Structure probing data (2A3 and DMS) for a 207-nucleotide construct. The RNA was probed in 150 mM KOAc, 10 mM MgCl2 and 150 mM bicine (pH 8.5) at 24 C.

[RMDB]
RNA sequence: GGGAACGACUCGAGUAGAGUCGAAAAGCACUGAAUGGGCGGAUGUGGACUAUGAGAUCACACACCAGCACGAGAACGGAUUUAUCGGACUUGUGAGCCAGUACGGGGUGAUCCAGCUUGGAAAAGAGGAGGAAACAGACGGAGAGAAUUACAAAGCAUCUCUUUACUAAUUCGUUAGUAAAGAGAUAAAAGAAACAACAACAACAAC
Reactivity to 2A3 in 0.01 (KOAc 150mM, MgCl2 10mM, bicine 150mM(pH8.5), 24C), signal-to-noise 6, nucleotides 027 to 156: g010c020a010c060u080g060a130a070u100g010g040g020c040g000g060a060u060g030u040g020g030a030c040u060a080u230g080a090g010a130u040c010a030c000a000c010a030c070c010a030g010c010a000c030g010a020g010a060a020c020g050g010a060u070u170u100a180u300c010g000g020a030c010u030u010g020u020g030a040g100c070c030a020g020u040a040c080g010g020g000g000u010g000a000u000c000c010a020g040c030u050u070g040g020a010a060a030a060g030a020g020g010a010g000g030a010a090a010c030a020g060a030c030g030g000a020g000a000g020a050a030u140u080a070c050a080a090a020g060c020
Reactivity to DMS in 0.01 (KOAc 150mM, MgCl2 10mM, bicine 150mM(pH8.5), 24C), signal-to-noise 3, nucleotides 027 to 156: g020c040a060c050u010g000a070a110u010g010g010g030c040g010g030a060u000g010u000g000g020a080c050u000a100u010g010a140g000a090u000c020a070c020a050c040a110c000c010a160g000c010a080c000g000a070g010a050a300c050g000g040a170u000u000u010a080u030c020g010g010a200c020u000u010g000u000g010a130g010c020c030a090g040u010a080c100g000g040g030g030u010g010a080u000c020c030a080g000c070u010u000g020g010a070a050a050a130g010a090g010g000a060g010g010a080a050a050c040a090g000a090c060g030g020a050g000a070g000a100a050u010u010a090c080a070a070a100g010c120
2A3 adducts were read by reverse transcription with SuperScript II with manganese.
Reactivities are given for positions 27 through 156.
Source: RMDB library OK3TST, as collected in RNAgym.